[RMDB]
RNA sequence: GGGAACGACUCGAGUAGAGUCGAAAAGAUAUGGACGUAACACGAGCUCAGACUGCAUAGAGGGAAAUCGGAAACGAUUUCCUACCCACCUAUGCAGUCUGAGAACUACUCGGUUACGUCCUAAGUCCUAACCUAAUCACUUCGGUGAUUAGGUUAGAAAAGAAACAACAACAACAAC
Reactivity to 2A3 in 0.01 (KOAc 150mM, MgCl2 10mM, bicine 150mM(pH8.5), 24C), signal-to-noise 2, nucleotides 027 to 126: g060a040u120a070u240g000g000a010c000g000u000a030a010c300a100c300g020a010g010c000u000c000a000g010a000c000u000g000c000a000u000a000g010a040g000g030g000a010a000a010u010c030g020g030a070a090a020c010g000a010u000u020u000c000c010u000a010c000c020c010a090c000c000u010a000u010g000c000a000g000u000c000u000g000a000g000a000a000c010u110a010c000u000c000g010g000u000u010a000c000g000u000c000c000u000a020a010g000u000c010
Reactivity to DMS in 0.01 (KOAc 150mM, MgCl2 10mM, bicine 150mM(pH8.5), 24C), signal-to-noise 5, nucleotides 027 to 126: g000a110u010a280u000g010g010a010c000g020u000a010a000c000a180c000g000a010g000c010u000c000a020g000a030c000u000g020c010a010u000a000g000a160g010g010g000a010a010a000u000c000g020g000a140a130a230c000g020a010u000u000u000c000c010u000a020c040c060c180a300c120c000u000a010u010g010c000a000g010u000c000u000g010a010g000a010a010c070u020a300c010u000c000g020g000u000u000a000c010g010u000c000c000u000a020a070g000u000c030
Description
The data come from the RNA Mapping Database (RMDB), library TTRINS. Structure probing data (2A3 and DMS) for a 177-nucleotide construct. For 2A3 the reverse transcriptase was SuperScript II with manganese. The 2A3 profile rests on 10,829 reads.